[RMDB]
RNA sequence: GGGAACGACUCGAGUAGAGUCGAAAAUUCGAUCCGGACCGGCUCAUCUCGGCAAAAGGCGGCAGUCCUCAGUACUCUUACUCUUUCCUAUAAAGAGGAGACUGCUGGACUCGCCGCCCAAGCCCGACACUCCUUAUUACUUCGGUAAUAAGGAGUGAAAAGAAACAACAACAACAAC
Reactivity to DMS in 0.01 (KOAc 150mM, MgCl2 10mM, bicine 150mM(pH8.5), 24C), signal-to-noise 3, nucleotides 027 to 126: u000u010c040g010a100u000c050c000g020g000a060c070c020g010g010c040u000c020a150u010c060u010c040g010g000c050a030a060a150a130g000g010c000g020g020c010a030g010u000c000c000u000c010a000g010u020a120c090u020c010u000u010a300c010u000c010u000u010u000c300c220u020a170u010a030a010a010g010a010g000g000a040g020a040c010u000g020c180u000g000g000a020c000u010c140g040c000c010g010c000c000c020a020a170g000c030c000c030g000a170
Reactivity to 2A3 in 0.01 (KOAc 150mM, MgCl2 10mM, bicine 150mM(pH8.5), 24C), signal-to-noise 3, nucleotides 027 to 126: u050u010c020g030a050u020c030c030g010g020a020c010c010g030g020c020u020c010a100u040c040u010c030g020g010c000a030a030a030a030g000g000c000g010g010c000a000g010u000c000c000u000c010a020g010u080a300c020u010c020u060u110a210c000u020c020u030u130u040c050c040u140a160u160a300a020a000g000a010g010g000a000g010a000c000u010g070c040u000g020g000a010c010u020c050g010c000c000g000c000c000c010a000a000g010c000c010c000g010a000

Description: Structure probing data (DMS and 2A3) for a 177-nucleotide construct. High 2A3 reactivity points to a flexible backbone, as in loops and unpaired stretches. For 2A3, 4,131 sequencing reads were counted. For DMS, 2,624 sequencing reads were counted. For DMS the reverse transcriptase was MarathonRT.